Conditions: 150 mM KOAc, 10 mM MgCl2 and 150 mM bicine (pH 8.5), 24 C. The record gives the reactivity of an RNA of 177 nucleotides to DMS and 2A3. Reactivities are given for positions 27 through 126. In probing experiments dimethyl sulfate is read out at A N1 and C N3, which are open when not base-paired. 2A3 adducts were read by reverse transcription with SuperScript II with manganese. For DMS the reverse transcriptase was MarathonRT.

RNA sequence: GGGAACGACUCGAGUAGAGUCGAAAAUAGCAUUGCUUUGAGAUUCUCCAUAGCUAUCAAGUCUUUAUACAAUGACAUGGAAAUAUCUGUGAACACUUUAUACUUCUCCAACAUCGAUGCCUUAACAUCCCUGGUGUUAAUUCGUUAACACCAGGGAAAAAGAAACAACAACAACAAC
Reactivity to DMS in 0.01 (KOAc 150mM, MgCl2 10mM, bicine 150mM(pH8.5), 24C), signal-to-noise 2, nucleotides 027 to 126: u010a080g000c070a100u010u000g030c070u010u000u000g030a100g000a130u000u000c050u000c030c010a070u020a110g000c050u000a040u000c040a100a090g000u000c080u000u000u000a080u030a140c160a050a040u000g010a040c010a050u000g040g000a070a110a070u020a050u000c020u020g000u000g000a040a040c070a060c050u000u000u000a050u000a050c110u000u000c020u000c020c040a070a070c090a070u000c030g020a080u000g000c020c030u000u000a040a060c290a160
Reactivity to 2A3 in 0.01 (KOAc 150mM, MgCl2 10mM, bicine 150mM(pH8.5), 24C), signal-to-noise 2, nucleotides 027 to 126: u090a000g010c030a050u000u130g010c040u100u040u110g030a050g000a060u050u050c030u010c060c030a030u000a030g000c040u100a020u160c020a040a070g040u000c030u070u170u050a210u020a120c100a090a060u090g020a020c030a050u050g000g060a020a120a070u140a060u050c030u030g030u020g100a100a000c030a010c040u100u120u020a110u010a040c000u020u000c020u000c000c000a040a040c010a060u030c000g020a020u030g040c000c020u090u040a040a020c020a080